[RMDB]
RNA sequence: GGGAACGACUCGAGUAGAGUCGAAAAAGAGUUCGCUUCGGCGAACUCUACAACGGGAAAACGGCCUCCCGGAAAGAUAAGGCGGAUACCGUCCAAGCGCCGAGAGUGGUGCGUUCGCGCACCACAAUAGAAAACACUGUUUCGACAGUGUUUUCUAAAAAGAAACAACAACAACAAC
Reactivity to 2A3 in 0.01 (KOAc 150mM, MgCl2 10mM, bicine 150mM(pH8.5), 24C), signal-to-noise 1, nucleotides 027 to 126: a000g000a010g000u000u020c000g000c010u020u060c140g010g000c000g000a000a000c000u000c000u020a000c020a060a000c000g000g000g000a020a070a000a090c000g020g020c010c000u000c000c000c000g000g030a110a090a000g090a090u190a090a070g000g000c000g020g020a150u160a210c050c000g030u060c060c040a010a000g070c050g000c150c000g010a020g030a030g040u000g030g020u000g000c010g000u010u050c240g000c000g000c030a000c000c000a000c020a000a000
Reactivity to DMS in 0.01 (KOAc 150mM, MgCl2 10mM, bicine 150mM(pH8.5), 24C), signal-to-noise 2, nucleotides 027 to 126: a050g010a020g000u000u000c000g020c020u000u000c260g060g010c000g020a000a000c000u000c000u020a040c080a110a050c010g000g000g000a020a030a060a120c020g000g020c030c020u000c020c020c000g000g020a050a050a260g000a110u010a050a070g020g000c000g010g010a200u010a020c070c020g000u000c020c110a020a070g000c090g000c000c000g000a300g010a090g020u000g000g030u010g010c000g000u000u010c180g010c000g010c000a010c000c000a010c000a020a050